[RMDB]
RNA sequence: GGGAACGACUCGAGUAGAGUCGAAAAUGGCUGGCCAGUAACAGGUGCAUCCCCAGUGAUCGGCCCAGCCGGCCGAUGGCGACGAAGACCUCGGCGAAAUCGGGAUGCUGACUGAGCAGUUCGGCGAGCAUGCAGUCCGGUUCGCCGGACUGCAUGCAAAAGAAACAACAACAACAAC
Reactivity to DMS in 0.01 (KOAc 150mM, MgCl2 10mM, bicine 150mM(pH8.5), 24C), signal-to-noise 1, nucleotides 027 to 126: u010g000g020c000u040g020g010c020c040a130g000u020a150a090c150a100g000g030u000g000c050a000u000c000c010c000c150a130g020u040g000a020u000c150g000g000c080c060c080a050g000c040c010g010g040c000c000g030a020u010g010g000c020g000a130c170g010a230a100g000a210c150c010u000c000g000g000c000g040a060a000a080u000c180g010g000g000a020u020g010c020u000g070a030c180u000g000a250g020c040a000g000u000u030c000g000g010c050g000a030
Reactivity to 2A3 in 0.01 (KOAc 150mM, MgCl2 10mM, bicine 150mM(pH8.5), 24C), signal-to-noise 2, nucleotides 027 to 126: u260g000g020c080u000g030g000c000c000a100g100u220a110a160c080a170g120g000u060g100c000a030u030c000c020c000c000a000g000u000g220a030u030c000g000g010c010c010c000a000g140c000c040g020g010c010c000g100a090u190g010g100c000g010a150c040g030a120a020g080a250c000c000u020c000g020g020c000g020a070a070a000u080c040g000g010g010a030u000g000c050u000g100a060c070u050g060a010g070c020a080g070u090u100c030g020g000c010g020a000
Overview: The record gives the reactivity of an RNA of 177 nucleotides to DMS and 2A3. The 2A3 profile rests on 603 reads. For DMS the reverse transcriptase was MarathonRT.